[RMDB]
RNA sequence: GGGAACGACUCGAGUAGAGUCGAAAAUGAAAGCGCGAACUCAGCCGAAAGGCACCGCGAAGAAAAACAGGAUGACGGGCAUCCCACAUCCAGCGGACUCACGCAGAGACGCGGAAGAGAAAAAAAACUAUUAGUACAGUUUCGACUGUACUAAUAGAAAAGAAACAACAACAACAAC
Reactivity to DMS in 0.01 (KOAc 150mM, MgCl2 10mM, bicine 150mM(pH8.5), 24C), signal-to-noise 3, nucleotides 027 to 126: u010g030a080a130a170g000c040g030c000g000a070a070c070u000c090a140g030c000c010g000a070a090a120g000g010c060a130c130c010g050c010g000a150a080g010a030a040a090a100a070c190a070g000g000a040u000g000a070c190g000g010g000c140a110u000c020c010c020a120c060a050u000c010c010a070g010c000g000g000a130c020u000c030a190c200g020c080a080g010a020g020a190c010g010c040g010g000a090a050g010a070g020a030a000a000a040a080a070a140a130
Reactivity to 2A3 in 0.01 (KOAc 150mM, MgCl2 10mM, bicine 150mM(pH8.5), 24C), signal-to-noise 2, nucleotides 027 to 126: u130g030a070a060a030g080c010g010c010g050a100a070c040u040c120a070g000c010c030g040a080a040a000g040g020c030a060c020c000g020c030g040a090a160g050a040a150a020a010a020c050a010g040g020a010u020g040a040c080g010g020g040c060a170u170c010c010c000a000c010a020u020c010c000a010g000c020g020g050a090c000u000c030a040c080g080c020a050g000a030g000a080c000g030c050g010g010a090a040g080a030g000a100a040a000a000a000a000a000a010